[RMDB]
RNA sequence: GGGAACGACUCGAGUAGAGUCGAAAAAUCCUCAGGUUCAUAAGCGUGAUGAUUGGGUGUUCAUGCUCCAUGCAUGACAUGUGCCUCCUUUGAACCUUGUAACGACCUUGGCACAUUACCCAUCUGAAAAAGACGUUCGCGUUCGCGCGAACGUCAACAAUGUAAAGCCGUUCGCGGCUUUACAUUGAAAAGAAACAACAACAACAAC
Reactivity to DMS in 0.01 (KOAc 150mM, MgCl2 10mM, bicine 150mM(pH8.5), 24C), signal-to-noise 2, nucleotides 027 to 156: a050u000c010c010u030c060a010g000g000u010u000c010a030u000a060a060g020c080g030u020g010a150u000g010a080u000u010g000g040g010u010g040u000u000c000a010u010g020c000u000c180c270a130u000g030c000a020u000g000a060c300a130u000g020u000g000c020c010u000c060c010u000u000u000g010a020a030c000c010u010u010g020u010a080a210c090g030a160c140c080u000u010g050g020c010a030c000a080u000u000a100c010c010c020a110u000c050u010g020a110a110a140a130a120g010a050c000g020u000u000c000g030c020g050u000u000c300g050c030g060c000g000a000a000c000g000u000c000a030a030
Reactivity to 2A3 in 0.01 (KOAc 150mM, MgCl2 10mM, bicine 150mM(pH8.5), 24C), signal-to-noise 3, nucleotides 027 to 156: a000u050c010c000u010c000a000g000g010u000u000c010a020u100a300a000g010c070g120u110g100a060u070g020a020u140u290g010g010g000u050g060u080u050c010a010u000g000c010u090c190c050a140u300g000c000a000u000g010a030c010a020u000g010u020g010c010c000u000c010c000u020u000u020g000a000a010c010c000u000u130g070u080a070a070c090g030a100c010c120u100u070g000g010c010a000c010a010u030u160a040c000c000c000a010u010c020u030g050a050a050a040a050a040g000a000c000g000u000u000c000g010c010g020u060u050c160g010c000g000c010g140a000a000c000g000u000c000a000a000
Notes:
Chemical mapping of a 207-nucleotide RNA with DMS and 2A3. The data come from the RNA Mapping Database (RMDB), library M2RFOK. The reactions ran in a buffer of 150 mM KOAc, 10 mM MgCl2 and 150 mM bicine (pH 8.5), at 24 C. For 2A3 the reverse transcriptase was SuperScript II with manganese. The DMS profile rests on 3,315 reads. For 2A3, 1,479 sequencing reads were counted.